[RMDB]
RNA sequence: GGGAACGACUCGAGUAGAGUCGAAAAUGCGACGCGGGGGCAACAGCCCGGCCUCAGCGAGGUCCCCUCGGGAGGUGCCUUCCGCGUCACGGAGUGCCGUGACCGGGGGUAACCCUGGCCGGGCACACUUCGGGCGGAUUUUCGAAUCCGCCCGAAGAAAAGAAACAACAACAACAAC
Reactivity to 2A3 in 0.01 (KOAc 150mM, MgCl2 10mM, bicine 150mM(pH8.5), 24C), signal-to-noise 1, nucleotides 027 to 126: u140g020c030g000a000c000g040c000g000g050g000g050g040c000a140a000c040a200g070c120c000c000g030g000c030c000u110c090a300g230c100g050a000g000g010u190c060c120c110c130u070c040g000g010g000a030g080g000u030g000c000c000u300u300c000c000g000c030g000u000c000a000c030g030g040a050g010u000g000c000c000g010u050g030a210c030c000g000g060g000g000g000u070a050a130c000c000c000u020g000g020c010c000g010g050g070c000a000c000a000

The record gives the reactivity of an RNA of 177 nucleotides to 2A3.
The 2A3 profile rests on 409 reads.
The RNA was probed in 150 mM KOAc, 10 mM MgCl2 and 150 mM bicine (pH 8.5) at 24 C.
Reactivities are given for positions 27 through 126.
Source: RMDB library RFM100, as collected in RNAgym.